RNA sequence: GGGAACGACUCGAGUAGAGUCGAAAAGUCAUAGCAGAGAAGGAAUCGAAUUAAAACCUUUAUCAAUAUGGCCAAAAUUGAUAAUAUUCCUUGCAAUAGCAUGUUAGGUUCGCAUGGUGCACUAUUGAUACUAUUAGCCGUUCGCGGCUAAUAGUAUAAAAGAAACAACAACAACAAC
Reactivity to 2A3 in 0.01 (KOAc 150mM, MgCl2 10mM, bicine 150mM(pH8.5), 24C), signal-to-noise 6, nucleotides 027 to 126: g030u020c020a030u030a030g060c120a020g040a020g010a080a010g020g040a040a050u160c090g050a130a070u210u090a100a100a090a100c020c010u050u030u030a290u040c000a000a020u010a020u050g050g020c020c020a030a030a040a090u140u120g040a040u010a140a020u070a100u080u040c000c000u020u050g010c020a020a140u030a100g060c030a010u020g020u090u070a050g060g070u020u060c030g000c020a030u030g050g030u070g030c020a020c040u060a060u080u080g030
Reactivity to DMS in 0.01 (KOAc 150mM, MgCl2 10mM, bicine 150mM(pH8.5), 24C), signal-to-noise 6, nucleotides 027 to 126: g000u020c030a020u000a050g010c090a140g010a160g010a040a030g000g000a080a070u010c190g030a080a130u050u040a080a070a110a110c080c060u010u010u000a050u000c010a060a080u000a030u000g010g010c040c120a040a060a110a050u010u000g000a030u020a020a050u030a080u000u000c000c010u000u020g010c050a070a070u010a070g030c030a010u000g000u000u020a060g000g000u010u000c090g000c020a030u010g000g000u010g010c100a090c090u010a070u010u010g000